[RMDB]
RNA sequence: GGGAACGACUCGAGUAGAGUCGAAAACAUCUUUCCUCCCUACACAGUGACUCCAGCUUGGGAGGGGCACGGCUAGGCUGAGCCAGCACUCCCUGUGGUGUCUGCCUGCCACGUGCAGCUCUGGAGUAAAACCUGGAGAAGUUCGCUUCUCCAGGAACUUGCAUAUCAGCUUCGGCUGAUAUGCAAGAAAAGAAACAACAACAACAAC
Reactivity to 2A3 in 0.01 (KOAc 150mM, MgCl2 10mM, bicine 150mM(pH8.5), 24C), signal-to-noise 1, nucleotides 027 to 156: c010a110u070c170u100u160u120c020c020u030c000c000c040u130a040c140a000c020a220g090u090g050a010c000u000c000c010a090g000c000u040u050g030g000g000a000g000g000g000g000c000a000c000g000g070c160u130a090g000g030c010u050g050a010g070c000c040a020g010c010a000c030u170c010c150c080u150g040u210g050g000u010g040u050c020u000g010c000c000u020g000c040c000a040c090g000u040g000c000a000g040c020u000c000u080g010g000a010g000u000a000a030a000a030c000c000u010g010g020a000g000a030a000g000u020u300c240g040c170u020u000c000u000c000c000a010g000g000a000a040

The data come from the RNA Mapping Database (RMDB), library M2RFOK. An RNA of 207 nucleotides, treated with 2A3 and read out base by base. The 2A3 profile rests on 623 reads. Values cover nucleotides 27 to 156. The reactions ran in a buffer of 150 mM KOAc, 10 mM MgCl2 and 150 mM bicine (pH 8.5), at 24 C.